[RMDB]
RNA sequence: GGGAACGACUCGAGUAGAGUCGAAAAGUGAGGUCAACCUUUUGCUACUACAUCAAUUUCCUUACUUAGGUAUGCCACUGGUUGUGGGGUUGUCCCACGAGUCUGAGUAAGGACUCCAAGAGCUAUCCGUGCUCUCUCUCUGACAUAUAAAGAGAAAGUACUGCAUGAGUUUCGACUCAUGCAGUACAAAAGAAACAACAACAACAAC
Reactivity to DMS in 0.01 (KOAc 150mM, MgCl2 10mM, bicine 150mM(pH8.5), 24C), signal-to-noise 1, nucleotides 027 to 156: g020u000g000a060g040g000u000c000a040a060c080c030u000u000u000u000g000c000u000a140c050u000a180c060a130u010c110a050a110u010u000u000c010c000u000u000a040c060u000u000a050g030g030u000a040u000g000c050c040a100c080u030g030g040u020u000g020u010g000g030g050g070u010u010g010u010c000c010c010a060c050g020a070g020u000c050u000g050a070g010u000a020a090g030g000a020c090u010c020c120a080a070g000a030g000c070u010a060u000c080c050g000u000g040c050u010c010u000c000u000c000u000c030u010g000a210c080a110u000a110u000a060a130a080g010a130g030a070a080a150
Reactivity to 2A3 in 0.01 (KOAc 150mM, MgCl2 10mM, bicine 150mM(pH8.5), 24C), signal-to-noise 4, nucleotides 027 to 156: g030u020g000a040g040g010u100c040a030a070c010c000u050u070u100u100g050c020u030a060c010u040a040c040a120u140c090a140a180u060u160u050c010c000u010u020a040c010u020u030a020g040g000u080a070u200g070c020c050a140c170u170g090g050u130u120g010u010g010g010g000g050u180u160g100u300c000c000c000a000c000g020a010g030u010c010u010g000a000g040u030a030a020g020g000a000c000u020c020c020a070a020g000a000g010c010u050a040u130c070c050g080u080g010c000u000c000u000c000u000c000u000c030u050g060a030c080a050u240a000u100a110a150a020g050a010g000a050a050a010
About this RNA: Source: RMDB library OK3TST, as collected in RNAgym. This 207-nucleotide RNA was probed chemically with DMS and 2A3. Values are in units of 0.01, from 0 to 300, in steps of 10. The RNA was probed in 150 mM KOAc, 10 mM MgCl2 and 150 mM bicine (pH 8.5) at 24 C.